[RMDB]
RNA sequence: GGGAACGACUCGAGUAGAGUCGAAAAGCCCAUAUGUUCGCAUAUGGGCAAAAGCAGAUCUGAGCAUGCGAGCUCACUGCGACAAAAGUCAACGCAAUAAAAAAACACGUCACUUCGGUGACGUGAAUCAUGUGUUAAACUUCGGUUUAACACAUGAAAAAGAAACAACAACAACAAC
Reactivity to DMS in 0.01 (KOAc 150mM, MgCl2 10mM, bicine 150mM(pH8.5), 24C), signal-to-noise 5, nucleotides 027 to 126: g010c000c000c000a010u000a010u000g020u000u010c230g030c000a010u000a000u000g010g010g020c000a010a000a040a110g000c010a000g000a150u000c230u010g020a010g020c010a050u000g030c030g010a160g000c000u000c000a060c020u000g010c000g010a100c170a050a070a080a110g000u000c130a060a100c050g010c040a080a120u040a010a000a060a070a070a090a130c000a000c000g010u000c000a000c010u000u020c150g020g010u000g000a000c000g010u000g000a010a080
Reactivity to 2A3 in 0.01 (KOAc 150mM, MgCl2 10mM, bicine 150mM(pH8.5), 24C), signal-to-noise 7, nucleotides 027 to 126: g010c000c000c020a000u000a000u000g010u000u060c220g000c130a000u010a000u000g000g000g000c030a040a040a010a010g000c000a000g020a070u100c070u210g000a000g010c020a040u160g090c070g090a030g000c000u010c000a020c010u000g000c000g020a020c060a020a170a020a010g110u100c040a070a110c040g010c060a060a080u220a210a110a020a000a000a010a010c010a000c000g000u010c000a000c000u030u050c200g070g000u000g000a000c000g000u000g000a000a020